[RMDB]
RNA sequence: GGGAACGACUCGAGUAGAGUCGAAAACGACGAAACUUACGCUCUAGCUGCCUAAGGGCAGUUUGUCCGCUUCCUAGAAUACUUGUGGUUUAGGAACCCGACCGUAGCGCACGCACACAAGUCCGUAUAGAGUCAAGCCUCGGGGCUUUAUACCAAACAUAAUUAGUAGGUUCGCCUACUAAUUAUGAAAAGAAACAACAACAACAAC
Reactivity to 2A3 in 0.01 (KOAc 150mM, MgCl2 10mM, bicine 150mM(pH8.5), 24C), signal-to-noise 7, nucleotides 027 to 156: c060g090a010c050g040a070a060a050c090u180u160a030c080g000c010u020c020u030a010g000c010u010g010c010c010u060a130a180g050g010g000c010a010g000u020u030u100g020u010c020c020g000c050u020u000c000c000u020a020g030a070a050u060a050c020u030u030g020u040g030g020u010u030u050a020g000g030a030a020c000c030c050g020a030c030c100g070u130a020g040c010g000c030a040c080g070c010a020c010a000c000a040a010g020u030c050c030g000u030a020u000a020g010a000g010u020c030a040a030g040c010c040u060c070g050g000g000g000c000u000u010u010a020u010a010c010c020a050a030a030
Reactivity to DMS in 0.01 (KOAc 150mM, MgCl2 10mM, bicine 150mM(pH8.5), 24C), signal-to-noise 3, nucleotides 027 to 156: c030g020a120c050g010a150a120a090c100u010u000a060c020g010c010u000c050u000a090g020c020u000g000c000c010u000a100a160g090g010g040c000a030g030u000u000u010g020u000c020c030g010c060u000u000c010c000u000a070g000a100a050u000a040c030u010u000g030u010g010g000u010u000u010a040g010g000a040a060c030c010c030g010a090c030c050g020u000a070g010c040g040c020a070c070g030c080a070c010a030c050a030a090g000u010c110c060g020u000a050u000a030g070a030g030u000c030a040a130g010c070c020u010c040g020g010g010g030c020u010u000u000a010u010a050c030c030a080a120a240

Source information: Conditions: 150 mM KOAc, 10 mM MgCl2 and 150 mM bicine (pH 8.5), 24 C. An RNA of 207 nucleotides, treated with 2A3 and DMS and read out base by base. 2A3 adducts were read by reverse transcription with SuperScript II with manganese. The 2A3 profile rests on 10,756 reads. Source: RMDB library ARCHII, as collected in RNAgym.